[RMDB]
RNA sequence: GGGAACGACUCGAGUAGAGUCGAAAAGAAAGAAAGAAAGGAUAUUGUAGUGUUUUAGAAUUCCUACGCUUUACCGUUGCAAAACGAAAUUCGGCAAAGCGUUUGGAUUCUGAAACCCUAUGAGUAAUGUGUGGUGAGAAUUCGUUCUCACCACACAAAAAGAAACAACAACAACAAC
Reactivity to 2A3 in 0.01 (KOAc 150mM, MgCl2 10mM, bicine 150mM(pH8.5), 24C), signal-to-noise 3, nucleotides 027 to 126: g050a000a010a010g110a000a060a050g180a010a070a010g230g050a110u150a100u150u060g000u010a000g020u010g000u000u000u000u000a000g000a000a000u110u050c000c000u020a000c000g000c000u000u020u000a020c010c010g020u000u020g050c150a100a090a090a050c060g100a100a120a160u050u060c010g000g000c010a000a010a000g000c000g010u000u020u070g000g010a000u000u000c000u000g000a000a000a000c000c000c000u000a000u020g010a010g020u120a040a160
Reactivity to DMS in 0.01 (KOAc 150mM, MgCl2 10mM, bicine 150mM(pH8.5), 24C), signal-to-noise 1, nucleotides 027 to 126: g010a160a130a000g050a080a090a140g000a030a080a090g000g000a130u030a050u000u010g010u010a000g030u000g000u030u000u000u000a000g000a000a000u030u000c000c010u000a000c010g000c000u000u000u000a080c000c000g050u000u020g040c300a050a040a100a140c300g000a030a070a100u010u010c110g000g000c010a010a000a010g000c000g000u010u000u020g000g000a010u000u020c000u000g000a000a000a000c010c040c000u010a000u000g020a050g000u030a120a060